[RMDB]
Chemical mapping of a 177-nucleotide RNA with DMS and 2A3.

RNA sequence: GGGAACGACUCGAGUAGAGUCGAAAAGCUAAGUAGUUCGCUACUUAGCAAAUAAAAUCUGCGGUUAAAAAGGAGGCGUUAUAACCGCUGAACGCCUCCUUAAAAGUGUGCGCUUCGGCGCACACAAUACAUAUUUAAUGUUCGCAUUAAAUAUGUAAAAAGAAACAACAACAACAAC
Reactivity to DMS in 0.01 (KOAc 150mM, MgCl2 10mM, bicine 150mM(pH8.5), 24C), signal-to-noise 3, nucleotides 027 to 126: g010c000u000a000a000g010u000a000g010u000u010c230g030c010u000a000c000u000u000a000g010c000a010a050a050u010a060a070a110a060u010c040u000g010c060g000g010u000u010a040a080a100a020a010g000g010a010g010g000c010g010u000u010a070u010a090a100c070c050g000c050u010g000a030a010c010g010c000c000u000c000c000u000u000a010a070a080a130g010u000g010u010g020c000g020c020u000u010c220g030g020c000g020c000a000c010a000c000a070a120
Reactivity to 2A3 in 0.01 (KOAc 150mM, MgCl2 10mM, bicine 150mM(pH8.5), 24C), signal-to-noise 2, nucleotides 027 to 126: g020c000u000a000a000g010u000a010g010u040u100c260g000c130u000a000c000u000u000a000g010c000a000a020a000u020a000a060a000a060u040c040u110g080c050g040g060u110u150a150a080a000a050a030g010g000a000g010g000c000g000u010u030a090u030a140a020c030c050g030c060u030g030a000a000c000g010c010c010u000c000c000u010u000a010a010a000a000g000u000g000u000g000c000g000c010u030u100c250g070g000c000g020c000a000c000a000c000a000a000
About this RNA: For 2A3, 3,282 sequencing reads were counted. The reactions ran in a buffer of 150 mM KOAc, 10 mM MgCl2 and 150 mM bicine (pH 8.5), at 24 C. For DMS the reverse transcriptase was MarathonRT.